Overview
Chemical mapping of a 207-nucleotide RNA with 2A3. The RNA was probed in 150 mM KOAc, 10 mM MgCl2 and 150 mM bicine (pH 8.5) at 24 C.

RNA sequence: GGGAACGACUCGAGUAGAGUCGAAAAACGGAAUCGCCACAUGUAAGAGCCUGUCUGUGGGGGCUGCAUGCGGUUAAAUUUAAAACACAGACUACACAUGUAGACGCCUUAAGUGAAAGAUUUUCGGACGCGGGUUCGAUUCCCGCCGCCUCCACCACAAACUUCCAUUCUUCGGAAUGGAAGUUUGAAAAGAAACAACAACAACAAC
Reactivity to 2A3 in 0.01 (KOAc 150mM, MgCl2 10mM, bicine 150mM(pH8.5), 24C), signal-to-noise 1, nucleotides 027 to 156: a000c020g000g000a000a080u080c060g000c000c000a000c000a000u000g000u040a280a050g000a050g300c000c030u030g000u000c010u000g030u030g020g000g000g000g000c000u000g000c000a030u000g000c000g000g000u040u110a000a150a040u190u230u110a060a030a000a000c000a010c000a000g020a000c000u050a040c050a030c020a120u240g000u100a060g060a190c030g140c070c050u180u210a160a040g030u050g190a050a020a020g020a110u040u040u090u220c090g030g000a030c020g010c010g030g060g020u100u080c010g030a050u070u150c020c000c010g030c000c000g000c050c000u000c020c020a050c000c000a030